The record gives the reactivity of an RNA of 177 nucleotides to DMS and 2A3. Conditions: 150 mM KOAc, 10 mM MgCl2 and 150 mM bicine (pH 8.5), 24 C. The data come from the RNA Mapping Database (RMDB), library 15KREP. 2A3 adducts were read by reverse transcription with SuperScript II with manganese. Reactivities are rounded to 0.1 and cut off at 0 and 3. Reactivities are given for positions 27 through 126.
[RMDB]
RNA sequence: GGGAACGACUCGAGUAGAGUCGAAAAAGGGUGAUGCAUCCUGGUCUUCUACUAUGAUCUUCUCUCUUCACCCCGUCGAGUGUGACGAGGAGUGUUCUGAAGUAGAGGCUUCAGAUUUAGAAGAAGGGUAUAUCAGAAUGUUCGCAUUCUGAUAUACAAAAGAAACAACAACAACAAC
Reactivity to DMS in 0.01 (KOAc 150mM, MgCl2 10mM, bicine 150mM(pH8.5), 24C), signal-to-noise 8, nucleotides 027 to 126: a030g000g010g020u000g010a120u000g020c080a040u000c010c000u000g010g010u000c020u010u000c010u000a060c090u010a110u000g010a050u000c010u000u000c010u010c030u000c030u000u000c020a110c010c010c000c010g020u000c030g010a160g020u010g010u010g010a010c030g000a050g000g010a130g010u000g000u000u000c080u000g010a030a010g010u010a090g010a100g010g010c070u000u000c040a010g000a060u010u010u000a040g000a070a030g000a050a090g010g010
Reactivity to 2A3 in 0.01 (KOAc 150mM, MgCl2 10mM, bicine 150mM(pH8.5), 24C), signal-to-noise 8, nucleotides 027 to 126: a000g060g010g000u060g040a190u130g060c040a020u010c010c000u010g050g020u020c000u030u000c000u030a060c000u020a080u170g030a050u020c000u050u020c020u010c000u000c000u010u030c010a030c000c020c010c010g060u040c020g010a210g170u190g030u150g070a010c010g000a130g010g020a130g020u040g050u060u010c020u020g000a030a000g010u110a060g030a060g180g010c000u010u010c000a020g010a050u060u050u100a030g010a060a000g030a010a020g110g020